[RMDB]
RNA sequence: GGGAACGACUCGAGUAGAGUCGAAAAGUGAACGAUCUCGGUUGUUUCUCUGAAGGCAUGAUCACCCCGUCGGAUGCGGAAGUUCGUGCUUCCGUCGAACGCGAAAGUCGGACGGCGGCCAUGAGUCAAUAUGUUUAAGGCUUCGGCCUUAAACAAAAUGUACCACUUCCUUCGGGAAGUGGUACAUAAAAGAAACAACAACAACAAC
Reactivity to 2A3 in 0.01 (KOAc 150mM, MgCl2 10mM, bicine 150mM(pH8.5), 24C), signal-to-noise 2, nucleotides 027 to 156: g110u090g110a090a050c010g020a090u060c010u020c170g020g000u020u000g010u000u040u020c100u000c030u050g050a090a090g100g040c040a030u000g000a020u110c030a010c030c000c000c000g010u020c010g060g020a040u080g000c020g020g010a020a000g000u130u280c160g100u300g100c000u010u020c000c000g030u040c040g000a130a020c100g020c020g150a120a050a010g060u050c050g090g000a040c000g060g020c100g080g050c040c000a030u020g020a000g030u050c010a020a050u040a050u260g000u000u000u000a000a000g000g000c040u030u040c290g010g000c020c000u030u000a000a000a000c000a000a000a000